[RMDB]
RNA sequence: GGGAACGACUCGAGUAGAGUCGAAAAUCCUCAGGGUUCGCCCUGAGGAAAAGGCUCAACUCAUGGAGCGCACGACGGAUCACCAUCGAUUCGACAUGAGAAAAAGAACUUGCUUCGGCAAGUUCAACUUUACAAUAGUGUUCGCACUAUUGUAAAGAAAAGAAACAACAACAACAAC
Reactivity to DMS in 0.01 (KOAc 150mM, MgCl2 10mM, bicine 150mM(pH8.5), 24C), signal-to-noise 7, nucleotides 027 to 126: u000c000c000u000c000a020g000g000g030u000u010c220g010c000c000c000u010g000a010g020g000a000a010a070a080g010g010c010u000c010a120a130c010u000c010a030u000g010g000a040g000c020g030c130a060c130g000a090c020g010g000a040u000c070a100c160c150a100u010c150g010a050u000u000c010g020a240c020a010u000g000a030g000a100a080a070a150a120g000a010a010c010u000u000g010c000u000u010c200g010g000c000a010a000g010u000u000c000a030a070
Reactivity to 2A3 in 0.01 (KOAc 150mM, MgCl2 10mM, bicine 150mM(pH8.5), 24C), signal-to-noise 7, nucleotides 027 to 126: u000c000c000u000c000a000g040g010g010u030u060c140g090c030c000c000u010g000a000g000g010a010a020a000a010g040g000c010u010c010a040a070c020u000c010a030u020g030g010a020g010c060g040c050a070c150g160a020c010g020g010a020u020c010a030c190c050a170u170c140g020a020u010u020c010g010a010c010a030u040g000a020g090a070a050a020a010a020g000a000a000c000u000u000g000c000u040u080c220g100g000c000a000a000g000u000u000c000a000a000
The record gives the reactivity of an RNA of 177 nucleotides to DMS and 2A3. The DMS profile rests on 10,485 reads. The reactions ran in a buffer of 150 mM KOAc, 10 mM MgCl2 and 150 mM bicine (pH 8.5), at 24 C. For 2A3 the reverse transcriptase was SuperScript II with manganese. Source: RMDB library M2PK50, as collected in RNAgym.